[RMDB]
RNA sequence: GGGAACGACUCGAGUAGAGUCGAAAAUGAAGUACGAAGGAAAGCCUUUGGUGGAACAUUUAAUAGAGAAGCAGAAGAUGCUGAGACACGUUGCUCCAAAACCCAUGAUGUCAUUAGGCUUGCUGUCUACAGUAAGCCUCUUCGGAGGCUUACUGUAAAAAGAAACAACAACAACAAC
Reactivity to DMS in 0.01 (KOAc 150mM, MgCl2 10mM, bicine 150mM(pH8.5), 24C), signal-to-noise 9, nucleotides 027 to 126: u010g000a070a090g010u020a070c090g000a090a070g000g000a120a070a060g010c020c010u000u010u010g000g010u010g010g010a080a080c040a070u020u040u020a090a110u040a120g000a090g000a160a040g020c020a030g010a110a080g000a080u010g000c020u010g000a120g010a100c120a050c100g000u000u010g000c010u000c000c030a030a040a080a090c040c010c010a080u020g010a090u010g000u010c070a050u020u010a040g010g010c020u000u000g000c040u010g000u010c070
Reactivity to 2A3 in 0.01 (KOAc 150mM, MgCl2 10mM, bicine 150mM(pH8.5), 24C), signal-to-noise 7, nucleotides 027 to 126: u130g020a060a010g070u130a020c120g060a030a040g080g050a170a040a050g070c010c000u040u050u070g060g010u030g020g030a030a040c010a050u040u090u140a150a100u130a020g120a010g030a090a020g000c020a010g010a150a040g080a100u070g000c010u040g090a030g030a040c090a000c070g060u060u090g030c010u020c020c030a030a080a090a110c030c010c000a030u130g060a110u090g100u080c050a060u070u080a040g030g000c010u020u030g000c020u060g010u050c040

Chemical mapping of a 177-nucleotide RNA with DMS and 2A3. The DMS profile rests on 28,096 reads. Source: RMDB library OK1LIB, as collected in RNAgym. The reactions ran in a buffer of 150 mM KOAc, 10 mM MgCl2 and 150 mM bicine (pH 8.5), at 24 C. Reactivities are given for positions 27 through 126.